The record gives the reactivity of an RNA of 177 nucleotides to 2A3 and DMS. Conditions: 150 mM KOAc, 10 mM MgCl2 and 150 mM bicine (pH 8.5), 24 C. The data come from the RNA Mapping Database (RMDB), library OK1LIB. DMS adducts were read by reverse transcription with MarathonRT.
RNA sequence: GGGAACGACUCGAGUAGAGUCGAAAAACUACAUAACUUCAGGCUGGGAAGCACUAAGCGAAUUACCACGACUUCGUGUGCUCAACUUGGAAUUCACCAGAGCUACGACGCGUGACGGUGGAUACUAAUAGCCGGACAAAUUCGUUUGUCCGGCUAUAAAAGAAACAACAACAACAAC
Reactivity to 2A3 in 0.01 (KOAc 150mM, MgCl2 10mM, bicine 150mM(pH8.5), 24C), signal-to-noise 2, nucleotides 027 to 126: a000c080u250a020c040a150u210a120a030c060u070u010c000a020g000g000c000u030g010g000g000a180a000g010c000a090c070u030a020a030g030c050g090a200a120u130u120a110c070c020a100c110g050a130c010u000u030c010g010u000g000u030g000c000u020c030a000a130c000u020u010g000g000a010a030u060u140c000a000c020c000a020g000a000g060c010u050a110c100g250a030c060g070c030g100u090g040a000c030g020g000u000g000g010a010u080a070c010u050a050
Reactivity to DMS in 0.01 (KOAc 150mM, MgCl2 10mM, bicine 150mM(pH8.5), 24C), signal-to-noise 1, nucleotides 027 to 126: a120c030u000a000c180a040u000a020a130c150u030u010c010a000g000g020c020u000g000g060g000a030a120g000c010a110c050u000a010a000g000c010g030a020a030u000u090a020c300c170a060c020g010a170c000u020u000c020g000u000g100u020g030c030u000c010a060a030c120u000u020g010g040a210a040u000u000c000a000c020c030a060g000a220g020c000u000a010c230g000a070c220g000c030g020u010g000a110c230g020g020u000g020g000a070u080a070c140u000a170